This 177-nucleotide RNA was probed chemically with 2A3 and DMS. The data come from the RNA Mapping Database (RMDB), library OK2TRN.
[RMDB]
RNA sequence: GGGAACGACUCGAGUAGAGUCGAAAAAAUUCAAACUUCAUUUCUGGAGAGAUGAGCUUAGAGAGCAUGCAUUACCCAUCUUUAAAAAUUUCCAGAUAAUUGUAUGCAUCCAGCAACUUUGGACUAACAUGACUAAAUCGUUCGCGAUUUAGUCAUGAAAAGAAACAACAACAACAAC
Reactivity to 2A3 in 0.01 (KOAc 150mM, MgCl2 10mM, bicine 150mM(pH8.5), 24C), signal-to-noise 1, nucleotides 027 to 126: a010a010u270u100c110a110a060a000c020u040u000c020a070u000u100u000c030u040g050g000a070g020a000g020a090u120g020a040g020c030u080u160a050g020a000g000a010g050c000a000u010g000c000a030u020u070a040c000c030c030a040u010c050u000u240u030a140a230a070a130a180u160u170u000c030c010a000g010a060u060a050a070u120u050g010u010a060u070g040c010a080u000c020c000a010g060c010a090a110c060u130u110u120g010g030a000c000u020a090a000
Reactivity to DMS in 0.01 (KOAc 150mM, MgCl2 10mM, bicine 150mM(pH8.5), 24C), signal-to-noise 1, nucleotides 027 to 126: a050a050u020u000c040a030a040a120c180u010u010c070a070u010u000u000c030u020g000g000a110g000a070g000a050u020g010a040g010c190u000u000a120g010a070g000a140g000c020a060u000g010c010a060u000u000a070c030c000c020a050u000c060u000u010u000a040a030a090a080a130u000u000u000c010c050a050g040a080u020a060a050u010u000g010u000a020u000g030c010a180u000c040c070a080g040c080a020a030c160u000u000u000g010g010a110c240u000a100a170